[RMDB]
RNA sequence: GGGAACGACUCGAGUAGAGUCGAAAAAUGACGCGGUGUUGGUCAUGGCCGGUGCCUACCGCAGCUACGCCCACCACCACCCGGGUCGGUACUCGGCGUUCACCCGGAUGCCGCUGGGCGGUGACGACAUGUCACAGCGGUUCGCCGCUGUGACAUGAAAAGAAACAACAACAACAAC
Reactivity to DMS in 0.01 (KOAc 150mM, MgCl2 10mM, bicine 150mM(pH8.5), 24C), signal-to-noise 3, nucleotides 027 to 126: a050u000g010a100c060g020c030g000g010u010g000u000u000g050g000u010c080a070u000g000g030c070c100g030g010u000g020c060c030u010a050c040c030g000c040a110g010c050u000a110c180g010c020c010c020a180c120c020a020c030c010a010c010c000c010g000g000g010u010c030g020g000u000a020c050u000c020g010g010c080g000u000u000c210a140c300c010c020g010g010a020u000g030c000c000g010c020u000g000g010g020c010g020g000u000g000a100c120g010a210
Reactivity to 2A3 in 0.01 (KOAc 150mM, MgCl2 10mM, bicine 150mM(pH8.5), 24C), signal-to-noise 1, nucleotides 027 to 126: a020u040g040a020c030g000c020g040g000u070g040u190u220g020g030u110c030a070u090g110g060c070c050g020g020u070g010c010c010u030a010c020c000g000c000a000g020c000u030a020c060g030c010c000c000a020c000c010a000c000c000a000c000c000c000g020g000g060u250c000g000g020u020a020c000u010c020g000g000c070g060u240u150c050a100c010c000c020g010g010a010u030g030c010c000g000c050u030g000g000g000c000g000g000u000g010a020c030g010a000